An RNA of 177 nucleotides, treated with 2A3 and DMS and read out base by base.

RNA sequence: GGGAACGACUCGAGUAGAGUCGAAAAGAUAUGGAGCUCCAUACCGACGAAGCUUUCUUACAGAAAGCAAGUUUCGGAAACGAAACUUUAAGCUGUAAGAAAGCAGAGGUAUGAGAGCUCCUAAGUCCAUCUAAGAGAAGUUCGCUUCUCUUAGAUGAAAAGAAACAACAACAACAAC
Reactivity to 2A3 in 0.01 (KOAc 150mM, MgCl2 10mM, bicine 150mM(pH8.5), 24C), signal-to-noise 4, nucleotides 027 to 126: g040a000u080a030u220g010g010a000g010c000u010c010c010a000u000a000c010c020g280a300c060g060a300a020g000c010u020u010u000c000u000u020a020c020a040g290a200a170a020g110c040a000a000g000u000u000u000c000g000g000a020a030a010c010g000a000a000a000c010u030u030u050a170a040g060c010u020g010u000a010a020g010a000a000a000g000c000a000g000a000g000g020u000a000u000g000a010g000a000g000c010u000c000c000u000a010a000g000u000c000
Reactivity to DMS in 0.01 (KOAc 150mM, MgCl2 10mM, bicine 150mM(pH8.5), 24C), signal-to-noise 6, nucleotides 027 to 126: g010a100u010a300u000g010g000a010g010c000u000c000c000a020u000a000c000c010g010a200c260g010a150a170g000c000u000u000u000c000u000u000a000c000a120g010a130a070a130g030c290a020a000g010u000u000u000c010g010g010a100a080a190c000g000a020a010a010c000u000u000u010a140a140g010c000u000g000u000a010a010g000a010a010a010g030c000a010g000a070g010g000u000a000u000g000a110g010a010g020c000u000c000c000u000a000a070g010u000c050
The reactions ran in a buffer of 150 mM KOAc, 10 mM MgCl2 and 150 mM bicine (pH 8.5), at 24 C. Source: RMDB library TTRINS, as collected in RNAgym. Reactivities are given for positions 27 through 126. DMS adducts were read by reverse transcription with MarathonRT. For 2A3 the reverse transcriptase was SuperScript II with manganese.